Conditions: 150 mM KOAc, 10 mM MgCl2 and 150 mM bicine (pH 8.5), 24 C. An RNA of 177 nucleotides, treated with 2A3 and read out base by base.
[RMDB]
RNA sequence: GGGAACGACUCGAGUAGAGUCGAAAAGAUGUCGCAGAUGACUUUCGCCCUUCUCAUUCAGCCCCUUUCUCUAAAUCUAAUUAAUUUGAUUUCAAUGUGGUAGGACGAGAGUCAUCUGUGACAGGAAGGACUACGAUACCUUCGGGUAUCGUAGUCCAAAAGAAACAACAACAACAAC
Reactivity to 2A3 in 0.01 (KOAc 150mM, MgCl2 10mM, bicine 150mM(pH8.5), 24C), signal-to-noise 2, nucleotides 027 to 126: g090a000u040g000u010c000g000c000a000g010a000u000g000a010c000u000u030u000c000g000c000c000c000u000u040c050u000c010a030u110u070c020a170g040c020c000c060c130u020u150u040c150u020c010u080a020a010a030u070c030u000a090a090u270u100a060a130u070u060u190g030a030u000u040u100c070a070a050u020g050u070g050g100u110a000g010g000a000c000g000a000g000a000g020u000c000a000u000c000u000g000u000g000a000c000a000g000g040a040a080
The data come from the RNA Mapping Database (RMDB), library RFM100.